RNA sequence: GGGAACGACUCGAGUAGAGUCGAAAAAACCAGCAUCAGGUACUACUGGUUUGGUCAAUUUGGGAAAUACAUGUUACAUGAAUUCUGCGUUGCAAUGCCUGGUACACAUUCCGCAGUUGCGUGAUUACCCGUCUUGAGUGUUCGCACUCAAGACGGGAAAAGAAACAACAACAACAAC
Reactivity to DMS in 0.01 (KOAc 150mM, MgCl2 10mM, bicine 150mM(pH8.5), 24C), signal-to-noise 1, nucleotides 027 to 126: a040a020c030c000a050g000c200a090u010c040a090g040g040u010a060c060u000a090c040u010g000g010u000u000u020g010g040u020c060a070a030u020u000u000g010g000g000a030a100a070u020a090c040a050u010g030u010u000a060c080a040u010g030a180a130u000u000c040u010g040c080g000u000u000g030c080a060a030u010g000c030c020u000g000g000u000a080c210a090c080a140u000u000c020c060g010c030a140g010u010u020g020c090g000u000g040a130u020u000a160